[RMDB]
RNA sequence: GGGAACGACUCGAGUAGAGUCGAAAAAAUAGGGGUUCAUAAGGUACGGCCCGUACUGAACCCGGGUAGGCUGCUUGAGCCAGUGAGCGAUUGCUGGCCUAGAUGAAUGACUGUCCACGACAGAACCCUUGGGCAAACAUUUCGAUGUUUGCCCAAGAAAAGAAACAACAACAACAAC
Reactivity to DMS in 0.01 (KOAc 150mM, MgCl2 10mM, bicine 150mM(pH8.5), 24C), signal-to-noise 1, nucleotides 027 to 126: a040a040u000a020g010g000g010g030u000u010c000a180u010a150a070g000g000u000a000c020g010g010c060c030c020g030u000a040c020u000g000a020a050c010c010c010g000g000g000u000a020g000g000c050u000g000c050u000u000g000a240g010c000c000a030g010u000g000a020g000c300g000a240u000u000g060c000u010g010g000c020c020u000a020g000a050u000g000a060a060u000g000a150c030u000g000u000c000c000a140c100g000a070c130a140g000a120a060c080c060